[RMDB]
RNA sequence: GGGAACGACUCGAGUAGAGUCGAAAAGAAAAAACAAAAAGAAAAAGUUAAGCCAACGAAAAUGGUUACACGUCAAAAUCGUCAAACAAUUAAAACUGAACUUGACUUACGAGGCUAUCGUUAUGAGUAUGAAGUGACGAUUCGUCGUCACUUCAUAAAAAGAAACAACAACAACAAC
Reactivity to DMS in 0.01 (KOAc 150mM, MgCl2 10mM, bicine 150mM(pH8.5), 24C), signal-to-noise 1, nucleotides 027 to 126: g010a000a040a040a060a060a030c120a030a060a080a120a050g000a040a000a000a140a080g030u000u010a070a040g000c030c030a050a060c040g000a130a040a030a030u000g000g000u000u000a120c120a060c050g000u000c060a050a050a080a050u000c060g030u010c160a050a030a010c230a040a080u030u000a030a030a110a100c190u020g000a060a070c050u000u000g000a040c020u010u010a070c070g000a070g000g000c100u020a030u000c080g010u010u010a060u020g000a140g010
Reactivity to 2A3 in 0.01 (KOAc 150mM, MgCl2 10mM, bicine 150mM(pH8.5), 24C), signal-to-noise 1, nucleotides 027 to 126: g030a020a070a000a020a020a000c160a090a160a000a010a020g160a010a120a130a010a000g020u110u070a050a040g020c050c050a050a000c020g120a020a010a000a100u020g000g000u010u030a020c040a000c100g020u060c030a000a040a070a140u060c010g000u000c030a050a110a110c040a050a000u070u090a070a190a020a020c020u030g040a030a000c010u000u090g000a000c000u020u040a010c010g020a030g000g080c070u110a030u130c010g000u010u070a060u200g070a060g090
An RNA of 177 nucleotides, treated with DMS and 2A3 and read out base by base. 2A3 adducts were read by reverse transcription with SuperScript II with manganese. The 2A3 profile rests on 797 reads. Conditions: 150 mM KOAc, 10 mM MgCl2 and 150 mM bicine (pH 8.5), 24 C.